Notes: Structure probing data (DMS) for a 177-nucleotide construct. For DMS the reverse transcriptase was MarathonRT. Conditions: 150 mM KOAc, 10 mM MgCl2 and 150 mM bicine (pH 8.5), 24 C. The DMS profile rests on 2,358 reads. The data come from the RNA Mapping Database (RMDB), library M2PK50.
[RMDB]
RNA sequence: GGGAACGACUCGAGUAGAGUCGAAAAACCUAUGGAUUCGUCCAUAGGUGCUGGCGCGCGGCCUUUGUCCUGUCGCGUGAGCGUGGUGGGCGAUAUACGCGCAAUAGUGACAAUUCGUUGUCACUAAUACAUUGGGGUACUUCGGUACCCCAAUGUAAAAAGAAACAACAACAACAAC
Reactivity to DMS in 0.01 (KOAc 150mM, MgCl2 10mM, bicine 150mM(pH8.5), 24C), signal-to-noise 2, nucleotides 027 to 126: a030c000c000u000a020u000g020g000a040u000u010c140g000u000c010c010a010u000a020g010g030u010g020c090u000g010g000c170g030c020g020c010g000g000c050c070u010u000u000g000u010c030c010u010g000u010c020g010c000g020u010g000a080g010c000g020u000g010g020u000g000g000g000c030g020a040u010a200u000a060c030g010c020g020c050a130a150u010a000g030u000g000a020c010a010a040u000u000c180g000u000u000g000u000c000a020c000u000a020a080